[RMDB]
RNA sequence: GGGAACGACUCGAGUAGAGUCGAAAAGGGUCUCGGCGAACGUCUUCAUCGGCUCCACGGCCUGGUGCAACGCCUCGACGAGUUCGGGUGCGCUGGCCUGCAAUCCGCGGGUCGCGUCGAUGAGCGCCCCUAAAUAGCAGUUCGCUGCUAUUUAGGGAAAAGAAACAACAACAACAAC
Reactivity to 2A3 in 0.01 (KOAc 150mM, MgCl2 10mM, bicine 150mM(pH8.5), 24C), signal-to-noise 9, nucleotides 027 to 126: g100g020g030u030c030u010c030g040g010c040g040a120a080c050g050u030c050u120u040c050a050u030c020g010g000c020u030c070c030a040c030g030g000c000c030u050g020g020u100g080c030a050a020c030g010c000c010u030c010g020a020c040g030a020g040u070u030c020g010g000g020u250g010c010g000c040u050g020g000c000c010u000g000c020a050a150u100c060c080g010c020g020g000g010u040c020g010c020g030u030c010g010a060u060g020a010g010c010g030c000
Reactivity to DMS in 0.01 (KOAc 150mM, MgCl2 10mM, bicine 150mM(pH8.5), 24C), signal-to-noise 5, nucleotides 027 to 126: g000g010g010u020c020u010c010g020g000c040g000a060a110c050g020u010c050u010u010c040a030u010c040g000g010c000u020c060c120a080c120g010g000c160c030u020g020g010u010g030c060a060a060c050g000c060c020u000c000g020a040c030g000a120g010u030u010c010g000g000g020u020g000c020g020c040u030g010g000c010c010u010g000c040a110a080u040c140c110g000c060g010g000g000u000c040g020c130g010u010c040g000a100u010g000a060g010c050g010c100
The data come from the RNA Mapping Database (RMDB), library OK1LIB. An RNA of 177 nucleotides, treated with 2A3 and DMS and read out base by base. For DMS, 13,293 sequencing reads were counted. Reactivities are given for positions 27 through 126.